[RMDB]
RNA sequence: GGGAACGACUCGAGUAGAGUCGAAAAGCUAGUCGGAGACGACUAGCAACGAUCAGUUCGCUGAUCGGAACGUGCAUUCGAAUACGCUAGAAGCACGAAUAGGCGACGCAUAGCGUAACGCAGAGGAAGCUCAUGACAUGAAUAACAAGGCGUCGCGGAUCAUUACGUAGUUCGCUACGUAAUGAUCAAAAGAAACAACAACAACAAC
Reactivity to 2A3 in 0.01 (KOAc 150mM, MgCl2 10mM, bicine 150mM(pH8.5), 24C), signal-to-noise 6, nucleotides 027 to 156: g000c000u000a000g010u000c000g020g040a040g010a100c000g000a000c000u000a000g000c010a000a020c010g000a000u010c000a000g040u070u090c140g020c090u000g000a000u000c000g010g030a050a020c010g010u020g000c090a300u010u020c010g010a070a040u050a050c010g000c010u010a010g000a010a010g000c000a000c010g000a030a090u190a130g050g000c000g000a000c010g010c020a060u090a040g000c020g030u010a060a050c080g000c060a030g030a040g090g040a080a040g070c010u040c050a100u090g050a070c030a110u170g080a130a030u180a100a030c090a100a070g100g000c000g000u010c000g000c000g000
Reactivity to DMS in 0.01 (KOAc 150mM, MgCl2 10mM, bicine 150mM(pH8.5), 24C), signal-to-noise 2, nucleotides 027 to 156: g030c000u010a000g010u010c000g020g020a290g010a300c010g000a050c010u000a010g000c000a030a010c010g000a000u010c000a010g010u000u010c240g070c000u000g010a010u000c010g000g000a060a100c050g040u030g020c030a260u000u010c010g010a080a140u010a030c030g020c030u010a140g030a060a080g010c000a030c030g010a110a070u010a080g040g020c000g010a030c000g040c000a180u010a050g010c050g010u010a030a080c050g020c040a150g000a100g010g010a100a140g000c030u000c060a100u010g020a110c100a160u000g000a110a090u010a050a060c090a060a060g040g010c010g040u000c000g010c000g010